[RMDB]
Annotation:
This 177-nucleotide RNA was probed chemically with DMS and 2A3.

RNA sequence: GGGAACGACUCGAGUAGAGUCGAAAAAACGCCUCGCUUUUUUCCUGUAAAACACCGCAACGCAGGAAAAGCGCAUGCUUAUCGGGACAACAACCCAACGCGGCAGGUGUACCAUGUACCAUUGGGCUGAACAGUCUUGGUUCGCCAAGACUGUUCAAAAAGAAACAACAACAACAAC
Reactivity to DMS in 0.01 (KOAc 150mM, MgCl2 10mM, bicine 150mM(pH8.5), 24C), signal-to-noise 2, nucleotides 027 to 126: a080a070c120g070c000c050u050c060g030c000u060u000u020u000u040u040c000c010u010g020u000a080a040a100a060c060a030c000c030g030c060a110a190c220g000c000a000g000g000a000a000a000a050g040c030g000c220a030u050g030c050u000u030a070u060c060g050g000g000a140c060a080a050c300a060a050c000c000c000a040a230c230g020c160g020g040c050a040g060g030u000g010u060a070c070c050a040u010g000u000a080c100c000a050u000u000g070g000g000c140
Reactivity to 2A3 in 0.01 (KOAc 150mM, MgCl2 10mM, bicine 150mM(pH8.5), 24C), signal-to-noise 3, nucleotides 027 to 126: a000a030c070g030c000c010u010c030g030c030u070u050u000u020u080u040c020c010u000g000u040a010a060a080a030c070a100c060c020g040c100a000a080c090g000c000a000g000g000a000a030a000a000g000c000g030c060a020u160g010c020u080u100a070u270c070g020g030g060a020c010a190a040c030a060a050c160c000c000a000a020c060g010c030g080g000c010a010g000g010u040g010u070a060c030c020a040u090g040u070a030c010c030a110u040u080g040g050g030c030
Record summary: It was measured as part of the RMDB library RFM100. The DMS profile rests on 1,426 reads. Reactivities are given for positions 27 through 126. Conditions: 150 mM KOAc, 10 mM MgCl2 and 150 mM bicine (pH 8.5), 24 C. For 2A3, 1,796 sequencing reads were counted.